[RMDB]
RNA sequence: GGGAACGACUCGAGUAGAGUCGAAAAUACGUACCGUUCGCGGUACGUAACUUACCGAGAACCUUGCUCGGUAUAACAAGGAAUCCCUUGGAAACAAGGGAACAAGAUUACCCUUCGGGGUAAUCAACCUAAAGUGCGUGUUCGCACGCACUUUAGGAAAAGAAACAACAACAACAAC
Reactivity to DMS in 0.01 (KOAc 150mM, MgCl2 10mM, bicine 150mM(pH8.5), 24C), signal-to-noise 2, nucleotides 027 to 126: u000a030c000g010u000a010c000c000g040u010u040c200g000c000g030g040u000a000c010g040u000a030a020c200u020u000a190c000c010g000a010g020a080a130c020c010u000u000g000c010u010c030g010g020u000a000u000a030a140c130a110a020g010g010a260a150u020c000c000c000u010u000g020g030a260a030a130c000a020a000g010g000g000a000a070c070a070a080g000a020u000u010a000c000c000c000u000u030c170g000g030g000g000u000a000a000u010c000a050a080
Reactivity to 2A3 in 0.01 (KOAc 150mM, MgCl2 10mM, bicine 150mM(pH8.5), 24C), signal-to-noise 2, nucleotides 027 to 126: u040a000c010g010u010a000c020c020g010u010u030c300g010c020g040g020u010a000c000g000u000a000a020c000u030u080a050c000c000g010a010g010a040a080c040c030u060u120g020c010u010c000g000g010u030a020u030a020a000c020a020a030g090g030a110a110u060c020c010c000u010u010g050g010a020a060a000c010a000a010g020g000g000a000a000c000a000a040g000a000u000u000a000c030c000c000u020u080c250g050g000g000g010u000a000a010u020c000a000a020

An RNA of 177 nucleotides, treated with DMS and 2A3 and read out base by base. The data come from the RNA Mapping Database (RMDB), library M2PK50. Reactivities are given for positions 27 through 126.